Overview
Chemical mapping of a 177-nucleotide RNA with DMS. Conditions: 150 mM KOAc, 10 mM MgCl2 and 150 mM bicine (pH 8.5), 24 C.
RNA sequence: GGGAACGACUCGAGUAGAGUCGAAAAUAAAAUCCCAACCUCCCUCCCUCGGUCGGUCGGUCCCUGCGUGCGUGCCUCCGGCCGGCCGGCCCUCGCUCCCUGCGUGCGUGCCUCCCUCCCAAAAAAACCUAUAUUAGAGUUUCGACUCUAAUAUAGGAAAAGAAACAACAACAACAAC
Reactivity to DMS in 0.01 (KOAc 150mM, MgCl2 10mM, bicine 150mM(pH8.5), 24C), signal-to-noise 2, nucleotides 027 to 126: u020a040a040a120a190u000c000c010c000a150a290c040c020u000c000c010c010u000c010c020c040u000c040g020g020u000c010g020g010u000c010g000g010u010c020c060c020u000g020c090g040u010g020c040g030u000g010c020c050u010c020c050g000g020c010c010g000g000c000c000g000g020c030c000c030u000c060g000c040u000c020c000c020u000g000c070g000u000g030c050g020u000g000c020c000u000c000c010c010u010c000c000c000a000a000a060a150a050a030a090

Description
Reactivities are rounded to 0.1 and cut off at 0 and 3. Reactivities are given for positions 27 through 126.